[RMDB]
Chemical mapping of a 177-nucleotide RNA with DMS and 2A3. The RNA was probed in 150 mM KOAc, 10 mM MgCl2 and 150 mM bicine (pH 8.5) at 24 C. The 2A3 profile rests on 525 reads.
RNA sequence: GGGAACGACUCGAGUAGAGUCGAAAAUCCAGCGACUUUCUCGAUGGGCAACUGGACUUCCGCGGACAACUGGCGGUGCGCAGCCACCUGCUCAUGUGCGGGCAUUGCCGGCGCUUCAUCCGCCAGAUGCUGAGCUACUCUUCGGAGUAGCUCAGCAAAAAGAAACAACAACAACAAC
Reactivity to DMS in 0.01 (KOAc 150mM, MgCl2 10mM, bicine 150mM(pH8.5), 24C), signal-to-noise 1, nucleotides 027 to 126: u000c000c000a060g000c230g000a190c090u000u070u000c200u000c000g000a160u020g000g090g000c120a130a000c030u000g000g000a000c000u040u000c000c000g000c160g040g000a050c140a010a100c000u000g000g020c000g010g000u000g000c300g070c000a210g000c100c300a140c040c000u000g000c000u000c170a230u060g000u050g040c040g000g000g000c210a110u060u040g000c150c180g060g070c000g000c050u100u010c240a030u020c000c000g070c000c000a030g000a000
Reactivity to 2A3 in 0.01 (KOAc 150mM, MgCl2 10mM, bicine 150mM(pH8.5), 24C), signal-to-noise 1, nucleotides 027 to 126: u110c000c000a000g020c000g090a030c030u090u110u030c050u010c040g170a140u190g000g120g000c000a090a080c050u010g000g070a060c000u080u030c020c020g050c040g140g030a070c000a080a030c010u010g010g000c010g000g000u040g000c030g000c000a030g030c040c000a010c050c010u050g000c010u000c060a170u230g170u150g060c100g000g000g040c060a070u000u130g050c020c010g060g040c000g000c000u060u120c130a020u000c000c000g000c000c000a000g000a010